This 177-nucleotide RNA was probed chemically with DMS and 2A3. The reactions ran in a buffer of 150 mM KOAc, 10 mM MgCl2 and 150 mM bicine (pH 8.5), at 24 C.
[RMDB]
RNA sequence: GGGAACGACUCGAGUAGAGUCGAAAAGAUAUGGACUCCGAUAUGGAGUUGUGGAUCGGAAACGAUCCAUACAACUAUGAAGUAUUGGAGUCCUAAGUCAAAACAACUUAUGUUCGCAUAAGUUGAAGUACCUUCUAAAGUUCGCUUUAGAAGGUACAAAAGAAACAACAACAACAAC
Reactivity to DMS in 0.01 (KOAc 150mM, MgCl2 10mM, bicine 150mM(pH8.5), 24C), signal-to-noise 5, nucleotides 027 to 126: g010a030u000a190u010g000g000a020c000u000c000c000g020a000u000a010u000g010g020a060g040u000u000g030u000g010g000a000u000c010g010g010a050a030a090c000g020a000u000c000c000a050u010a050c080a020a020c020u010a230u010g010a130a300g010u000a010u000u000g010g000a020g010u000c000c000u000a000a060g000u000c020a110a080a130a290c010a000a010c000u000u000a000u000g000u000u000c280g030c000a010u000a000a010g010u000u000g000a060a130
Reactivity to 2A3 in 0.01 (KOAc 150mM, MgCl2 10mM, bicine 150mM(pH8.5), 24C), signal-to-noise 7, nucleotides 027 to 126: g010a000u020a010u070g000g000a000c000u000c000c010g010a000u000a010u030g240g100a240g070u000u010g000u000g000g000a010u010c000g000g010a020a010a010c010g000a000u000c010c000a000u200a010c010a000a000c010u140a180u300g210a130a010g000u010a000u010u020g000g000a000g000u000c000c000u000a000a000g000u000c010a000a030a080a190c000a010a000c000u020u010a010u040g060u090u120c300g010c180a000u010a020a000g000u000u010g010a070a020
Source: RMDB library TTRDES, as collected in RNAgym.